[RMDB]
RNA sequence: GGGAACGACUCGAGUAGAGUCGAAAAAAGACGUGUUCGUACACUUCUCUGCUAUCCAGAACGAUGGCUACAAAUCCCUGGACGAAGGUCAGAAAGUAUCCUUCACCAUCGAAAGCGGCGCUAAAGGCAUUCUAAUUAUGUUCGCAUAAUUAGAAUGAAAAGAAACAACAACAACAAC
Reactivity to DMS in 0.01 (KOAc 150mM, MgCl2 10mM, bicine 150mM(pH8.5), 24C), signal-to-noise 9, nucleotides 027 to 126: a070a040g010a040c070g020u000g010u000u010c200g010u010a160c040a040c030u000u000c020u000c060u000g020c040u000a060u000c020c120a120g010a110a150c150g010a030u000g010g010c050u000a090c140a050a110a120u000c010c010c010u000g010g020a090c110g010a040a030g010g010u000c090a100g010a090a070a100g020u000a050u000c020c010u000u000c020a160c040c010a030u000c050g010a050a090a100g010c040g010g010c050g010c070u000a040a080a110g010g000
Reactivity to 2A3 in 0.01 (KOAc 150mM, MgCl2 10mM, bicine 150mM(pH8.5), 24C), signal-to-noise 9, nucleotides 027 to 126: a000a000g070a020c050g020u030g030u050u120c090g060u220a020c020a010c020u050u030c040u010c030u040g000c010u030a030u030c020c020a050g060a130a010c050g010a030u020g020g000c010u050a030c050a050a100a050u040c020c000c000u010g030g010a030c050g020a040a010g030g010u040c020a030g220a070a160a000g060u060a070u090c010c000u000u020c010a010c010c000a040u070c020g030a070a070a020g040c040g040g000c010g000c070u090a110a040a020g070g000

This 177-nucleotide RNA was probed chemically with DMS and 2A3.
For 2A3 the reverse transcriptase was SuperScript II with manganese.